Description
This 177-nucleotide RNA was probed chemically with DMS and 2A3. 2A3 adducts were read by reverse transcription with SuperScript II with manganese. The reactions ran in a buffer of 150 mM KOAc, 10 mM MgCl2 and 150 mM bicine (pH 8.5), at 24 C. DMS adducts were read by reverse transcription with MarathonRT. It was measured as part of the RMDB library OK2TST. Values cover nucleotides 27 to 126. The DMS profile rests on 2,608 reads.

RNA sequence: GGGAACGACUCGAGUAGAGUCGAAAAACAUGCAACACAUGGAACGGUUGCAGGUGCAGGUCACGGAGUAUUACCCAACCAAGGGCACCUCCUCGCCAGCUGAAGCAGAGAAGAAGGAGGACAACAGAUGCUUGAAUCAUUUCGAUGAUUCAAGCAUAAAAGAAACAACAACAACAAC
Reactivity to DMS in 0.01 (KOAc 150mM, MgCl2 10mM, bicine 150mM(pH8.5), 24C), signal-to-noise 4, nucleotides 027 to 126: a070c090a110u000g000c000a040a020c030a100c050a080u000g010g000a130a210c270g010g010u010u020g020c000a040g010g020u000g040c070a040g050g000u010c040a080c080g000g010a100g000u000a090u000u020a100c000c000c020a140a110c120c110a120a100g010g000g020c020a050c040c010u000c010c000u010c030g020c010c020a100g020c040u000g000a100a080g010c080a060g010a110g000a040a020g000a090a050g010g000a030g010g000a070c040a010a020c040a130g000
Reactivity to 2A3 in 0.01 (KOAc 150mM, MgCl2 10mM, bicine 150mM(pH8.5), 24C), signal-to-noise 2, nucleotides 027 to 126: a000c010a000u060g010c000a000a010c020a000c040a220u170g140g030a100a030c090g060g010u020u020g000c000a010g010g020u060g050c030a010g030g100u080c030a010c090g050g020a050g040u070a070u130u140a080c000c000c000a030a030c020c050a050a110g030g010g030c020a080c000c000u000c000c000u000c000g020c020c000a050g040c060u080g040a120a020g030c090a000g030a010g010a160a010g000a040a000g010g010a000g030g000a000c010a020a010c000a010g130